Chemical mapping of a 207-nucleotide RNA with DMS and 2A3.

RNA sequence: GGGAACGACUCGAGUAGAGUCGAAAAGGCUUCAUCUUCCUAUUCACCGUAGGAGGUCUAACGGGCAUUGUACUAGCUAAUUCCUCCCUAGACAUUGUAUUACAUGAUACAUAUUAUGUAGUCGCACACUUCCACUAUGUCUUAUCUAUAGGAGCAGCAUGCCUACACACUUCGGUGUGUAGGCAUGAAAAGAAACAACAACAACAAC
Reactivity to DMS in 0.01 (KOAc 150mM, MgCl2 10mM, bicine 150mM(pH8.5), 24C), signal-to-noise 1, nucleotides 027 to 156: g020g010c050u030u000c040a080u020c040u020u000c020c000u000a100u000u000c130a180c100c070g040u000a070g000g000a060g020g000u000c050u000a050a070c030g010g000g010c050a100u000u000g020u000a090c070u000a050g070c020u010a040a150u000u000c020c020u000c010c020c020u000a050g040a040c020a100u000u000g010u000a030u000u000a030c070a050u000g020a040u000a110c160a140u010a150u000u000a010u000g020u010a010g030u000c070g000c080a050c090a110c050u000u010c020c060a060c020u020a050u000g010u000c050u010u000a040u000c060u010a080u000a040g000g010a080g010c040a150g010
Reactivity to 2A3 in 0.01 (KOAc 150mM, MgCl2 10mM, bicine 150mM(pH8.5), 24C), signal-to-noise 3, nucleotides 027 to 156: g040g010c020u080u050c080a070u050c020u050u090c000c010u030a130u120u240c110a080c100c060g010u050a020g000g030a020g030g020u000c050u050a090a070c080g000g020g010c040a040u020u130g030u060a040c020u100a030g050c020u040a150a120u100u080c000c040u000c010c070c010u010a010g010a020c030a040u040u070g090u070a030u030u040a070c040a030u070g020a010u060a100c060a050u270a110u160u050a030u010g030u030a000g040u030c010g000c090a080c000a010c070u100u020c020c000a040c020u050a060u060g040u000c020u060u090a090u000c030u030a050u030a190g020g000a020g050c000a000g060
It was measured as part of the RMDB library PDB130. The reactions ran in a buffer of 150 mM KOAc, 10 mM MgCl2 and 150 mM bicine (pH 8.5), at 24 C. For DMS the reverse transcriptase was MarathonRT.